[RMDB]
RNA sequence: GGGAACGACUCGAGUAGAGUCGAAAAGAUAUGGAUUAGUGUGUAUACACUCGCAUAGGAGGUGAGUCGGAAACGACUCACUCCCCACCCUAUGAACUACGAGGGUAUACACACUAAUCCUAAGUCACAUGCGAAAUAACUUCGGUUAUUUCGCAUGAAAAGAAACAACAACAACAAC
Reactivity to DMS in 0.01 (KOAc 150mM, MgCl2 10mM, bicine 150mM(pH8.5), 24C), signal-to-noise 2, nucleotides 027 to 126: g010a050u000a300u010g000g000a010u000u000a010g010u000g000u000g020u000a010u000a000c000a020c000u000c000g000c020a020u010a010g000g000a180g050g000u000g000a060g000u000c010g040g000a180a150a190c000g000a000c010u000c020a000c040u000c030c020c000c080a300c130c020c000u000a020u010g010a060a050c200u010a300c030g000a020g000g000g010u000a010u000a000c010a000c010a000c000u000a000a010u000c000c000u000a030a100g020u010c060a230
Reactivity to 2A3 in 0.01 (KOAc 150mM, MgCl2 10mM, bicine 150mM(pH8.5), 24C), signal-to-noise 1, nucleotides 027 to 126: g040a020u150a050u240g000g000a000u020u000a000g020u010g000u000g020u000a000u010a010c040a010c010u000c010g080c040a000u000a010g000g030a000g020g000u000g000a020g000u000c030g030g050a070a060a080c000g000a010c010u000c010a000c010u040c010c010c000c000a030c010c000c010u010a020u040g050a090a110c130u160a090c300g000a010g000g000g010u000a000u000a000c000a000c010a000c000u000a010a000u000c000c000u000a010a000g000u000c010a000